[RMDB]
Overview
An RNA of 177 nucleotides, treated with 2A3 and DMS and read out base by base. Values cover nucleotides 27 to 126. The DMS profile rests on 72,298 reads.

RNA sequence: GGGAACGACUCGAGUAGAGUCGAAAAAGGCUAGGAGCUAGCAGGCGGCUGUCGGCUCGAACCGAAUGGGCUAGCAGCGAGGUCAGCACUGCUAGUCUUGUGGCUUUAGCAGUCAGCAGCUACUGAGGGCGCGGGCUUCGUUCGCGAGGUUUGCGCCAAAAGAAACAACAACAACAAC
Reactivity to 2A3 in 0.01 (KOAc 150mM, MgCl2 10mM, bicine 150mM(pH8.5), 24C), signal-to-noise 7, nucleotides 027 to 126: a000g050g000c010u020a020g040g060a040g040c010u010a000g000c010a010g030g000c010g010g000c000u020g010u030c000g010g000c000u000c030g020a050a020c010c000g050a120a130u120g000g000g000c000u010a000g000c000a000g000c010g050a040g020g070u100c020a000g020c010a010c040u000g000c000u000a000g000u030c000u000u030g030u030g000g000c000u030u020u040a020g020c020a010g020u040c010a010g000c000a000g000c010u040a050c020u040g040a060g030
Reactivity to DMS in 0.01 (KOAc 150mM, MgCl2 10mM, bicine 150mM(pH8.5), 24C), signal-to-noise 7, nucleotides 027 to 126: a040g000g000c010u000a040g000g010a080g010c030u010a020g010c020a070g000g010c040g000g000c000u000g000u010c040g000g010c000u000c040g010a070a130c050c030g020a250a040u010g000g000g000c000u000a040g000c000a010g010c050g000a130g010g000u010c060a070g010c020a140c000u000g000c000u000a000g000u020c000u000u000g000u030g000g010c060u000u010u010a080g010c050a030g000u010c020a050g010c030a040g000c010u010a110c040u000g000a190g000